RNA sequence: GGGAACGACUCGAGUAGAGUCGAAAAAGGAAAAGAAAGCAAUAUGCGAUGUCGUUAGUAACGGCGAGCGAAAUCGACUUAGAACAAACUGAAUCCCUUUUAGUAAUAUUAGGGAGAUGUGGUGUAUAAACUAUCGUCCUUUCGAGGACGAUAGUUUAAAAGAAACAACAACAACAAC
Reactivity to 2A3 in 0.01 (KOAc 150mM, MgCl2 10mM, bicine 150mM(pH8.5), 24C), signal-to-noise 2, nucleotides 027 to 126: a000g120g050a020a200a010a000g100a110a090a000g120c050a080a170u150a070u240g030c000g030a090u130g000u000c030g000u000u130a060g050u090a070a040c000g040g000c020g010a010g000c020g080a100a000a000u120c010g070a030c060u040u110a040g120a100a080c110a140a040a000c080u050g010a030a110u050c000c000c000u010u020u000u020a050g000u100a050a060u000a000u020u010a000g040g020g020a090g000a060u100g070u100g110g050u090g130u100a060u050
Reactivity to DMS in 0.01 (KOAc 150mM, MgCl2 10mM, bicine 150mM(pH8.5), 24C), signal-to-noise 3, nucleotides 027 to 126: a100g000g000a040a070a000a080g000a060a040a040g020c070a100a050u030a060u050g000c020g010a150u000g030u000c000g010u000u010a090g000u050a160a040c070g010g000c020g000a130g010c040g010a040a110a080u040c100g000a060c110u000u000a130g010a210a060c160a050a130a090c000u000g010a090a140u000c000c000c000u020u000u010u000a000g030u040a100a130u000a000u000u000a000g030g000g010a000g000a070u030g000u010g000g010u000g000u050a130u020

Conditions: 150 mM KOAc, 10 mM MgCl2 and 150 mM bicine (pH 8.5), 24 C. An RNA of 177 nucleotides, treated with 2A3 and DMS and read out base by base.